About this RNA
An RNA of 177 nucleotides, treated with 2A3 and DMS and read out base by base. Reactivities are given for positions 27 through 126. Reactivities are rounded to 0.1 and cut off at 0 and 3. For 2A3 the reverse transcriptase was SuperScript II with manganese. The reactions ran in a buffer of 150 mM KOAc, 10 mM MgCl2 and 150 mM bicine (pH 8.5), at 24 C.
RNA sequence: GGGAACGACUCGAGUAGAGUCGAAAAACUACAUGAUACGUACCAAACUGAAAAUUUAAGACUCCUGGUAUUACUCAAAAUGGUAGGUCACAAAGUAUGGAUUUUCUGAGCUUCAUCAUUAUUGAACCACUUGUACCCAAUUCGUUGGGUACAAGUGAAAAGAAACAACAACAACAAC
Reactivity to 2A3 in 0.01 (KOAc 150mM, MgCl2 10mM, bicine 150mM(pH8.5), 24C), signal-to-noise 2, nucleotides 027 to 126: a000c040u090a030c020a070u130g030a020u050a130c020g010u010a020c000c020a020a040a050c060u040g060a000a040a100a110u240u230u090a150a080g070a090c000u030c010c010u010g070g010u080a040u080u070a080c050u030c090a080a030a090a050u050g090g030u010a070g060g070u020c010a030c020a130a120a000g010u030a050u150g030g090a050u050u040u080u000c050u030g060a020g020c040u080u060c050a050u020c000a050u020u290a110u170u300g050a030a020c030
Reactivity to DMS in 0.01 (KOAc 150mM, MgCl2 10mM, bicine 150mM(pH8.5), 24C), signal-to-noise 2, nucleotides 027 to 126: a060c060u000a060c060a100u020g000a090u010a120c140g030u010a090c030c020a040a060a150c120u010g010a020a050a080a110u000u010u010a110a110g010a070c060u000c040c080u000g010g000u000a060u000u000a080c140u000c090a030a040a100a070u000g010g000u000a040g000g000u000c050a080c080a070a050a110g010u000a040u000g000g000a090u010u000u000u000c020u000g010a120g000c050u010u000c070a030u000c110a040u010u000a110u000u000g000a030a090c180